[RMDB]
RNA sequence: GGGAACGACUCGAGUAGAGUCGAAAAGUUGACAGAGAAGAGAGCAGAGUGUUGAUCAAGAAGCAGGAAGUGGAUAUUCUGGAUCUGAAAGAAACCCUUAGGCUGAGAAUACUUUCUGAGGACAUAGCCACGACAUGCUAUUCGUAGCAUGUCGUGGAAAAGAAACAACAACAACAAC
Reactivity to DMS in 0.01 (KOAc 150mM, MgCl2 10mM, bicine 150mM(pH8.5), 24C), signal-to-noise 1, nucleotides 027 to 126: g000u000u000g000a080c060a050g000a100g000a040a050g010a110g020a040g000c070a060g030a040g020u020g020u000u020g020a070u020c060a090a110g000a030a130g020c070a040g000g030a020a090g040u000g020g020a120u010a070u000u000c110u000g030g010a080u000c040u010g010a110a020a040g000a060a080a050c100c050c060u010u000a030g010g030c020u010g000a090g020a150a020u000a060c040u000u000u050c030u020g000a120g000g000a040c090a060u010a070g010